[RMDB]
RNA sequence: GGGAACGACUCGAGUAGAGUCGAAAAGAUAUGGAUCUUCACCCAGCGAAGAACUGGCUCGGAAACGAGCCAGGGAGCUGUGUGACUGGAUCCUAAGUCAAAUCUCCCUCAGUUCGCUGAGGGAGAAGACGACUACAAUGUUCGCAUUGUAGUCGUCAAAAGAAACAACAACAACAAC
Reactivity to DMS in 0.01 (KOAc 150mM, MgCl2 10mM, bicine 150mM(pH8.5), 24C), signal-to-noise 2, nucleotides 027 to 126: g010a110u000a300u040g020g020a000u010c010u010u000c010a010c010c100c010a020g000c000g010a170a220g020a150a190c010u020g020g030c000u000c010g000g000a130a150a210c010g000a030g020c010c000a010g000g010g010a070g000c000u000g030u000g010u000g000a060c300u000g010g030a010u000c000c000u020a070a090g010u020c020a070a220a130u000c000u000c010c000c000u000c000a010g010u000u030c230g050c000u010g010a020g010g010g000a000g000a000a040
Reactivity to 2A3 in 0.01 (KOAc 150mM, MgCl2 10mM, bicine 150mM(pH8.5), 24C), signal-to-noise 2, nucleotides 027 to 126: g020a000u100a060u140g000g000a020u030c030u020u030c040a030c050c190c000a020g000c030g200a300a060g040a050a050c010u000g000g020c000u030c010g030g070a040a090a060c020g020a000g000c000c010a010g000g000g000a010g000c000u020g030u020g030u020g080a080c130u150g110g010a000u020c000c000u000a080a010g030u020c030a070a030a300u030c000u000c010c000c010u000c010a020g020u060u200c300g040c170u010g010a000g000g000g000a000g000a000a000